[RMDB]
RNA sequence: GGGAACGACUCGAGUAGAGUCGAAAAAGCCCAUGAAAUUGAUGAACUGAGAGUUGCUUCCAGUCCAGAGCGCACCAUCUGGAAUUCCAGUCUGAGGUUACAAUUAGAACUCCUGACCCCAGAUUCAUCGAACUCUAGCUUUCGAGCUAGAGUUCGAAAAAGAAACAACAACAACAAC
Reactivity to 2A3 in 0.01 (KOAc 150mM, MgCl2 10mM, bicine 150mM(pH8.5), 24C), signal-to-noise 1, nucleotides 027 to 126: a000g040c040c000c070a060u160g090a090a140a090u190u070g100a000u130g060a080a000c000u140g060a100g040a040g230u060u300g020c040u130u000c070c000a080g000u000c000c000a000g000a000g010c050g020c000a010c170c000a160u000c010u010g070g000a000a010u110u000c040c000a000g030u000c040u110g070a070g070g100u040u090a070c070a070a070u150u180a040g000a070a000c050u070c000c010u020g110a100c080c000c000c000a000g000a140u000u040c000a040